[RMDB]
RNA sequence: GGGAACGACUCGAGUAGAGUCGAAAAAGCUAAUCAAACAUCAUAAUUUUUAUGGAGAGUUUGAUCCUGGCUCAGGAUGAACGCUGGCGGCGUGCCUAAUACAUGCAAGUCGAGCGAACGGACGAGACAUAUCGUUCGUCUUCGGACGAACGAUAUGAAAAGAAACAACAACAACAAC
Reactivity to DMS in 0.01 (KOAc 150mM, MgCl2 10mM, bicine 150mM(pH8.5), 24C), signal-to-noise 4, nucleotides 027 to 126: a010g000c070u020a090a070u010c000a020a000a030c000a090u000c020a020u010a030a090u030u040u040u020u010a010u000g000g030a100g000a150g010u000u000u000g020a000u000c070c100u020g010g030c020u020c060a050g010g020a270u010g010a060a150c020g020c010u000g000g000c030g030g000c020g000u010g000c060c070u000a090a090u060a250c080a020u020g000c010a020a070g010u000c050g010a020g000c000g020a050a170c040g000g000a190c060g010a110g000a170
Reactivity to 2A3 in 0.01 (KOAc 150mM, MgCl2 10mM, bicine 150mM(pH8.5), 24C), signal-to-noise 5, nucleotides 027 to 126: a020g100c090u100a040a020u020c000a000a000a010c010a030u030c010a010u040a090a070u140u170u200u120u150a030u060g080g020a130g010a020g100u010u000u000g010a010u020c000c050u050g030g000c010u020c030a020g000g090a060u080g040a050a000c020g000c010u010g060g010c000g000g010c000g000u010g010c010c020u120a140a030u140a130c040a010u050g020c030a110a190g030u030c020g140a030g020c010g000a040a020c010g010g040a010c020g020a010g010a040